[RMDB]
RNA sequence: GGGAACGACUCGAGUAGAGUCGAAAAAUCUGGUGGCUCAUUUCGCUUCUUCUUGAUACAAAGAAUAUACAGAAUACUGCUAUUUGUGUGGUCAUAUGCCCAUCGUGUAGUAUAUCAUAUAUUUACACGUAAUAGAGAGAGAUCAACCGUAUGAUGGCCCUAGACUGAUCUUCGGAUCAGUCUAGGGAAAAGAAACAACAACAACAAC
Reactivity to 2A3 in 0.01 (KOAc 150mM, MgCl2 10mM, bicine 150mM(pH8.5), 24C), signal-to-noise 1, nucleotides 027 to 156: a000u070c010u070g000g040u040g000g000c020u060c030a080u010u120u090c030g060c010u000u070c000u070u040c010u020u100g030a040u030a220c020a100a120a000g030a130a020u170a000u020a030c040a030g030a080a000u080a100c030u050g120c010u050a140u190u100u060g060u000g010u100g010g000u040c020a050u050a100u300g040c020c010c000a040u060c010g030u000g000u000a020g000u000a000u030a030u140c080a050u030a000u000a000u240u070u030a060c050a000c010g020u020a000a040u140a030g030a010g020a000g010a010g010a060u060c050a010a160c050c040g050u170a070u100g070a060u120g090g000